[RMDB]
RNA sequence: GGGAACGACUCGAGUAGAGUCGAAAAGGGGUCAGCCACUUGGACCGGAUAUUGUCAGUCGGUACUGAAGCCUCCACGGUACACGACUUGGAUUUAUAUCCGCUAGUGGCUGACGGAGGCACCCAAAGCAGAUCGUGUGUUCGCACACGAUCUGCAAUCUUUCAUGCCCUUUCGAGGGCAUGAAAGAAAAAGAAACAACAACAACAAC
Reactivity to 2A3 in 0.01 (KOAc 150mM, MgCl2 10mM, bicine 150mM(pH8.5), 24C), signal-to-noise 1, nucleotides 027 to 156: g040g010g040g020u030c000a000g000c000c010a000c000u130u120g070g050a160c070c120g030g010a090u070a030u050u280g070u000c020a020g000u010c000g040g010u000a000c030u010g070a150a050g010c000c010u000c020c000a000c030g000g010u060a060c300a070c090g000a000c020u040u170g080g000a010u020u260u030a110u110a030u060c010c000g000c080u060a030g000u000g010g010c010u000g000a000c000g000g000a010g010g060c010a090c000c010c000a000a090a000g000c000a000g000a000u000c000g010u000g000u000g020u000u100c200g000c100a000c000a000c020g000a000u010c020u000g010c000a000a000
Annotation:
The data come from the RNA Mapping Database (RMDB), library RNAMAK. An RNA of 207 nucleotides, treated with 2A3 and read out base by base. Reactivities are rounded to 0.1 and cut off at 0 and 3.